Description: The record gives the reactivity of an RNA of 207 nucleotides to 2A3.
[RMDB]
RNA sequence: GGGAACGACUCGAGUAGAGUCGAAAAAAAGUUCUGGAAAUAGGUAGUGCUGAUGGCUCUACAACAUUGCGAGUAUUCUCAAUGCCGCUGAACUGUACAUUUAAAUGUGGUUACAGUGGUAAGCCUCAUGUUAGUAUAUUUUGCCACAGUUGAAAAACGUAUGCUGUCCAUUCGUGGACAGCAUACGAAAAGAAACAACAACAACAAC
Reactivity to 2A3 in 0.01 (KOAc 150mM, MgCl2 10mM, bicine 150mM(pH8.5), 24C), signal-to-noise 1, nucleotides 027 to 156: a000a000a000g090u070u040c060u070g070g050a060a170a120u160a040g000g070u020a020g030u070g020c040u050g020a180u190g010g000c000u050c010u000a000c030a050a020c050a090u070u300g020c070g000a020g070u070a080u150u010c050u020c000a060a060u070g000c010c000g020c000u010g000a000a000c000u040g150u170a000c000a040u070u160u300a160a300a110u090g020u010g000g000u040u010a160c000a000g010u040g000g000u000a000a030g050c020c020u050c020a040u030g000u100u050a030g140u020a020u020a060u160u090u100u180g020c000c000a030c020a100g010u060u050g050a050a020a080a100a000
The RNA was probed in 150 mM KOAc, 10 mM MgCl2 and 150 mM bicine (pH 8.5) at 24 C.